The record gives the reactivity of an RNA of 177 nucleotides to DMS. For DMS the reverse transcriptase was MarathonRT. In probing experiments dimethyl sulfate is read out at A N1 and C N3, which are open when not base-paired. The reactions ran in a buffer of 150 mM KOAc, 10 mM MgCl2 and 150 mM bicine (pH 8.5), at 24 C.
RNA sequence: GGGAACGACUCGAGUAGAGUCGAAAAAAAGGACGGUGGGGAGUGCCCAGCGGCCGACAGGAGUAAUUCCCGCCGAAACAGGGUUUUCACCCUUCCUUUCUUCGGGUGUCCUUCCUCGCGCCCGCAGGAUUAGCCUUAUCUUCGGAUAAGGCUAAUCAAAAGAAACAACAACAACAAC
Reactivity to DMS in 0.01 (KOAc 150mM, MgCl2 10mM, bicine 150mM(pH8.5), 24C), signal-to-noise 1, nucleotides 027 to 126: a030a040a050g000g010a090c040g000g000u010g010g000g000g010a100g020u010g000c000c020c030a080g010c030g030g000c030c020g010a060c040a080g010g000a060g000u000a060a080u010u000c000c020c010g010c020c040g010a070a040a060c180a030g000g000g010u000u000u010u010c140a070c000c000c000u000u000c010c010u010u000u000c000u010u010c020g000g000g050u000g010u000c020c040u000u000c020c010u000c100g000c060g010c030c000c000g040c170a070g020